[RMDB]
Background
An RNA of 177 nucleotides, treated with DMS and 2A3 and read out base by base. The reactions ran in a buffer of 150 mM KOAc, 10 mM MgCl2 and 150 mM bicine (pH 8.5), at 24 C. The data come from the RNA Mapping Database (RMDB), library OK2TRN.
RNA sequence: GGGAACGACUCGAGUAGAGUCGAAAAAAACAGGCAGUGAGUGGGGGUUGGAGGCAGGCACGGGCUCACUGGUGUUUGGUUUUGUUUUCUGAGGUCCAACCCAAGCCCUUUGACUUUAGACGCAAGCUAUAUAUGUGUAGUUCGCUACACAUAUAUAAAAAGAAACAACAACAACAAC
Reactivity to DMS in 0.01 (KOAc 150mM, MgCl2 10mM, bicine 150mM(pH8.5), 24C), signal-to-noise 9, nucleotides 027 to 126: a020a020a020c030a050g010g020c020a020g020u000g010a030g030u000g020g020g010g000g010u000u000g000g000a080g020g010c080a050g020g010c090a090c130g010g000g010c020u000c040a020c030u000g000g010u000g000u010u000u010g010g010u000u000u000u000g010u000u000u000u000c030u010g010a070g010g010u000c020c060a030a050c040c000c020a110a100g000c030c020c040u000u000u010g010a060c040u000u000u010a060g010a070c300g010c110a060a060g010c130
Reactivity to 2A3 in 0.01 (KOAc 150mM, MgCl2 10mM, bicine 150mM(pH8.5), 24C), signal-to-noise 2, nucleotides 027 to 126: a000a000a000c030a040g180g000c000a010g020u010g020a000g010u100g010g140g010g000g000u020u050g030g030a030g080g010c060a020g020g040c040a020c030g060g050g010c030u020c000a010c010u030g040g040u040g050u020u060u100g060g000u040u090u100u080g050u040u070u030u020c010u020g000a020g030g060u000c010c010a010a020c040c010c010a010a070g020c020c000c000u120u010u050g020a010c000u060u100u110a030g030a040c030g000c110a020a040g000c010